Background: This 207-nucleotide RNA was probed chemically with 2A3. Conditions: 150 mM KOAc, 10 mM MgCl2 and 150 mM bicine (pH 8.5), 24 C. 2A3 adducts were read by reverse transcription with SuperScript II with manganese. It was measured as part of the RMDB library OK3TST. For 2A3, 452 sequencing reads were counted.

[RMDB]
RNA sequence: GGGAACGACUCGAGUAGAGUCGAAAAAGUGCUGGAAUUGCAUCCGAGCAUAGCUUCUAAAUUAUGAGGGGGCCAUUCAUAAAUCAAAGGAGCUGACCCAGUGAGGUUUAUGACAGUAUAAAGCUGCCUGCCUGCUGAAUAGUCACCUCCUCCAGACCUCUUACCGAUUGUUCGCAAUCGGUAAGAGAAAAGAAACAACAACAACAAC
Reactivity to 2A3 in 0.01 (KOAc 150mM, MgCl2 10mM, bicine 150mM(pH8.5), 24C), signal-to-noise 2, nucleotides 027 to 156: a000g050u050g020c000u030g020g030a070a050u130u150g020c050a070u040c050c060g120a020g000c000a040u060a040g010c020u010u090c020u110a150a300a300u300u120a140u300g070a100g000g020g020g050g030c020c030a050u090u080c000a020u110a170a110a020u080c080a250a000a000g000g000a000g000c020u000g000a000c000c000c050a000g040u080g300a070g060g000u060u140u150a110u200g030a010c000a000g050u080a070u180a300a110a010g000c000u010g000c000c010u010g010c000c000u000g000c000u000g010a100a120u050a140g000u000c000a000c000c010u010c000c000u020c000c000a080g030a050c000